[RMDB]
Record summary: The record gives the reactivity of an RNA of 177 nucleotides to DMS and 2A3. For DMS, 1,638 sequencing reads were counted.
RNA sequence: GGGAACGACUCGAGUAGAGUCGAAAAGAAAUACGCUUCGGCGUAUUUCAAAAUGCCAGCUAAGAGGUAAAGUGUCAUAGCAAAAAGAAAAAGAAAAGAAAAAAACGCAUCCCUUCGGGGAUGCGAACUAUAGGUAUGAGUUCGCUCAUACCUAUAGAAAAGAAACAACAACAACAAC
Reactivity to DMS in 0.01 (KOAc 150mM, MgCl2 10mM, bicine 150mM(pH8.5), 24C), signal-to-noise 2, nucleotides 027 to 126: g000a010a010a010u000a010c000g020c000u000u010c200g030g040c000g020u010a000u000u000u000c000a070a110a060a080u000g000c000c010a110g000c040u000a050a070g010a040g000g010u000a050a120a120g010u010g010u000c060a090u000a040g030c030a030a030a040a070a090g010a020a040a050a030a050g000a020a030a050a080g010a050a010a040a050a040a040a130c010g000c000a000u000c000c010c000u000u000c210g020g010g000g000a000u010g010c000g000a010a040
Reactivity to 2A3 in 0.01 (KOAc 150mM, MgCl2 10mM, bicine 150mM(pH8.5), 24C), signal-to-noise 1, nucleotides 027 to 126: g000a000a000a000u000a000c010g000c000u020u060c190g040g050c000g000u000a020u000u000u010c000a010a000a000a030u070g020c000c000a010g020c020u060a080a000g060a040g150g040u060a090a130a200g070u090g040u070c010a050u050a030g010c020a000a020a040a060a020g130a050a110a010a050a000g080a010a080a020a010g090a030a110a050a030a010a010a000c010g000c000a000u000c000c000c000u000u020c220g010g000g000g010a000u000g000c020g010a000a000

The reactions ran in a buffer of 150 mM KOAc, 10 mM MgCl2 and 150 mM bicine (pH 8.5), at 24 C. High 2A3 reactivity points to a flexible backbone, as in loops and unpaired stretches. The 2A3 profile rests on 1,897 reads.